[RMDB]
RNA sequence: GGGAACGACUCGAGUAGAGUCGAAAACGUGCCUUCAUGCUAAGGGUUUGAUAUCUGUUAAAACCCGGUGCAUUCAUCAAUGCAGGUUAAGCCAAAGGGAUGUCCCGACCGGAGGCCGACAAUCCAGAUAGCUCAAGAAUGUUCGCAUUCUUGAGAACAGGAAAAAGCGGUUCGCCGCUUUUUCCUGAAAAGAAACAACAACAACAAC
Reactivity to DMS in 0.01 (KOAc 150mM, MgCl2 10mM, bicine 150mM(pH8.5), 24C), signal-to-noise 1, nucleotides 027 to 156: c030g000u000g030c030c020u000u040c030a100u000g010c050u000a230a300g000g020g040u000u000u000g010a070u000a080u000c090u050g010u000u000a040a020a050a030c020c010c000g060g000u000g010c010a080u000u020c050a050u000c110a070a080u010g060c040a020g030g010u000u000a060a040g040c000c020a030a300a280g000g000g020a140u020g000u000c010c000c040g000a220c030c010g020g020a300g020g000c000c020g020a070c050a040a170u000c040c030a110g020a110u000a090g000c000u000c000a000a010g000a020a000u020g030u000u000c260g030c000a020u000u000c000u000u000g010a020g000a010a120